[RMDB]
RNA sequence: GGGAACGACUCGAGUAGAGUCGAAAAACGUUGAUAUGGAUUUACUCCGAGGAGACGAACUACCACGAACAGGGGGAACUCUACCCGUGGCGUCUCCGUUUGACGAGUAAGUCCUUAGUCAACAUGCGGCGUGCGCUGUUCGCAGCGCACAAAAGAAACAACAACAACAAC
Reactivity to 2A3 in 0.01 (KOAc 150mM, MgCl2 10mM, bicine 150mM(pH8.5), 24C), signal-to-noise 2, nucleotides 027 to 129: a000c100g000u000u000g000a010u000a000u110g000g000a000u000u000u000a000c020u000c010c010g020a040g040g020a000g000a010c020g020a040a050c080u150a050c040c000a000c000g030a160a060c110a220g020g000g030g010g050a070a110c020u010c010u080a040c030c060c000g000u000g020g000c000g000u010c010u000c000c000g010u050u020u110g010a040c000g000a010g000u000a000a000g000u000c000c010u000u000a000g030u000c000a000a000c000a030u080g070c100g110g010c010
Reactivity to DMS in 0.01 (KOAc 150mM, MgCl2 10mM, bicine 150mM(pH8.5), 24C), signal-to-noise 3, nucleotides 027 to 129: a120c100g010u050u000g030a000u010a040u050g020g000a030u080u000u000a000c020u010c000c000g010a080g050g000a000g010a080c020g070a220a030c150u100a300c100c010a000c030g020a050a300c150a070g000g000g000g000g000a180a110c030u060c060u020a170c250c100c000g010u000g000g000c040g020u100c010u010c040c060g020u070u030u060g020a000c300g020a060g000u020a000a070g000u010c000c030u000u000a020g000u000c000a040a080c030a020u000g050c130g000g030c110